[RMDB]
RNA sequence: GGGAACGACUCGAGUAGAGUCGAAAAUCGGUGUUGACCAGUGUCGGCGGCGCGAACCGGCGGCUCAGCUGGGCCACCAGUGUCACCGGGUCGGGCUCGUCAUCGAGCAGCUCGAUCAGCACGGCACGGAGCAAGACAACUUCGGUUGUCUUGCUCCAAAAGAAACAACAACAACAAC
Reactivity to DMS in 0.01 (KOAc 150mM, MgCl2 10mM, bicine 150mM(pH8.5), 24C), signal-to-noise 1, nucleotides 027 to 126: u000c000g090g010u060g000u020u000g000a140c080c000a300g000u000g090u000c050g000g000c000g000g000c040g040c250g000a140a300c010c030g000g040c130g000g000c000u080c000a250g010c190u000g000g000g000c130c120a020c030c020a050g070u000g020u000c080a080c230c000g000g020g000u000c000g010g020g030c000u000c130g000u000c030a090u070c290g000a030g000c120a030g000c000u000c020g000a080u000c030a000g050c130a000c010g030g000c000a070c080
Reactivity to 2A3 in 0.01 (KOAc 150mM, MgCl2 10mM, bicine 150mM(pH8.5), 24C), signal-to-noise 2, nucleotides 027 to 126: u150c030g010g010u090g000u020u250g110a130c050c000a080g010u020g010u090c020g000g080c020g000g000c080g000c010g190a080a150c020c010g050g010c000g000g000c010u070c070a040g020c070u120g000g040g060c030c000a070c020c000a010g000u010g020u060c010a020c030c000g030g000g020u020c000g010g000g010c000u000c040g050u040c030a090u140c060g040a080g000c070a000g000c010u010c000g010a050u010c030a000g060c000a040c040g010g040c030a000c040